The record gives the reactivity of an RNA of 177 nucleotides to DMS and 2A3. It was measured as part of the RMDB library M2PK50. For DMS, 640 sequencing reads were counted. For DMS the reverse transcriptase was MarathonRT. Conditions: 150 mM KOAc, 10 mM MgCl2 and 150 mM bicine (pH 8.5), 24 C. For 2A3, 1,074 sequencing reads were counted. DMS (dimethyl sulfate) methylates the pairing face of unpaired adenines and cytosines.
[RMDB]
RNA sequence: GGGAACGACUCGAGUAGAGUCGAAAACCGAGAAGCUUCGGCUUCUCGGAAAUAAAGUGCGAAAUAAAUCAGGAAACUGAAGUGCAAAGCACAAGCAGAAAAAAACCGUCUUGUUCGCAAGACGGAAGUUACCAUACCUCUUCGGAGGUAUGGUAACAAAAGAAACAACAACAACAAC
Reactivity to DMS in 0.01 (KOAc 150mM, MgCl2 10mM, bicine 150mM(pH8.5), 24C), signal-to-noise 1, nucleotides 027 to 126: c010c000g000a000g000a030a020g020c000u010u000c300g000g000c000u000u000c000u000c000g000g000a000a070a070u060a090a050a170g050u010g010c000g000a100a020a060u000a060a060a100u000c000a010g010g000a120a190a190c010u000g000a040a100g000u000g050c100a160a160a210g000c000a000c010a080a090g000c130a170g030a000a000a010a070a110a100a040c000c000g000u000c000u000u000g000u000u000c230g030c000a030a000g000a030c000g000g010a000a000
Reactivity to 2A3 in 0.01 (KOAc 150mM, MgCl2 10mM, bicine 150mM(pH8.5), 24C), signal-to-noise 1, nucleotides 027 to 126: c010c000g020a010g010a000a010g000c000u070u120c230g040g000c000u000u000c070u000c000g000g010a010a020a000u110a010a090a030g040u010g000c030g100a080a100a070u130a010a070a060u060c030a000g050g020a030a010a060c020u010g010a050a070g040u030g120c080a080a070a070g010c010a000c020a000a050g120c060a040g300a060a090a020a030a000a000a010c000c010g000u000c000u020u050g110u070u090c300g000c020a000a010g020a010c010g000g000a020a000